RNA sequence: GGGAACGACUCGAGUAGAGUCGAAAAUCCACUAUGAAUCUAGUCACUAAAUAAACACAAUUAGCUACUGUGUGUGAUAGUGAGUGUUGAUAACACAAAAUAAUAGUAUAGUUUUGGAAGAUUAUACGCGCCCUUGCUCCGUUCGCGGAGCAAGGAAGAGAACAUAUCCCUUCGGGGAUAUGUUCUCAAAAGAAACAACAACAACAAC
Reactivity to 2A3 in 0.01 (KOAc 150mM, MgCl2 10mM, bicine 150mM(pH8.5), 24C), signal-to-noise 3, nucleotides 027 to 156: u010c000c010a020c050u210a150u260g090a090a100u070c070u100a080g060u030c020a000c010u010a010a060a180u260a090a270a040c040a030c030a080a100u200u090a060g040c030u140a120c060u070g010u000g000u000g040u000g120a030u040a030g020u000g030a040g020u000g010u000u040g140a150u230a300a020c020a000c010a000a130a040a050u240a020a130u130a170g000u010a000u020a040g010u000u030u100u170g090g020a080a100g010a020u020u020a020u010a040c030g080c010g040c030c030c000u000u000g000c000u040c020c010g020u020u020c110g030c020g080g040a000g000c000a000a020g000g000a000a020
Reactivity to DMS in 0.01 (KOAc 150mM, MgCl2 10mM, bicine 150mM(pH8.5), 24C), signal-to-noise 2, nucleotides 027 to 156: u010c010c010a210c120u000a100u010g020a100a090u000c070u000a100g010u000c000a060c020u000a030a090a170u000a140a070a050c000a000c000a010a050u000u000a210g020c130u030a080c040u020g070u010g060u000g020u000g000a190u000a020g000u010g000a080g080u000g020u000u000g020a090u000a120a140c020a150c040a070a030a030a070u000a090a300u020a100g000u000a060u000a060g050u000u000u000u010g010g000a220a190g000a050u000u000a040u000a010c000g000c080g000c080c000c000u000u000g000c020u000c000c000g020u000u010c290g030c010g040g000a020g010c010a000a020g000g000a020a040